An RNA of 207 nucleotides, treated with DMS and 2A3 and read out base by base. For 2A3, 2,911 sequencing reads were counted. DMS adducts were read by reverse transcription with MarathonRT. It was measured as part of the RMDB library RNAMAK.

RNA sequence: GGGAACGACUCGAGUAGAGUCGAAAAGCGCAGUUCGCUGCGCAAAAAACCUUUGUGCCUGCACAACAAUACUACCCACCCUGGGCUUUCCCAUUGGGAAAGUUCCAGGAGGUAUUGUAGUGCAGGCACUCUGGUAAAAAAUGCGAUUCGUCGCAAAAUGUAUGGUGUAAUUCGUUACACCAUACAUAAAAGAAACAACAACAACAAC
Reactivity to DMS in 0.01 (KOAc 150mM, MgCl2 10mM, bicine 150mM(pH8.5), 24C), signal-to-noise 1, nucleotides 027 to 156: g010c000g010c000a020g010u000u000c300g020c010u000g030c000g010c010a000a010a040a080a070a020c010c000u000u000u000g000u000g010c000c000u000g000c000a020c030a140a010c010a010a020u000a030c000u000a060c050c010c000a300c180c010c000u000g010g000g010c000u000u000u010c000c000c000a300u000u000g030g010g000a010a000a000g020u000u000c000c000a020g000g000a020g010g020u000a000u000u000g020u000a050g040u000g000c000a000g000g010c010a000c000u000c010u000g030g020u010a020a010a050a070a050a100u000g010c010g010a090u010u000c160g020u010c010g010c020a040a040a110
Reactivity to 2A3 in 0.01 (KOAc 150mM, MgCl2 10mM, bicine 150mM(pH8.5), 24C), signal-to-noise 3, nucleotides 027 to 156: g000c000g000c010a010g020u080u120c130g050c090u010g000c020g000c020a050a000a000a020a000a040c010c010u010u000u010g010u010g000c000c000u000g060c000a000c010a050a050c000a000a020u000a010c020u030a030c040c060c040a060c020c010c000u000g000g000g010c000u010u000u000c020c010c100a300u180u300g000g010g040a010a010a000g060u290u300c000c000a000g000g000a010g020g000u000a000u000u000g000u000a060g000u010g000c000a000g000g000c000a000c000u000c000u000g000g010u020a020a000a000a020a000a050u100g000c010g010a020u050u070c190g060u030c000g090c020a000a070a000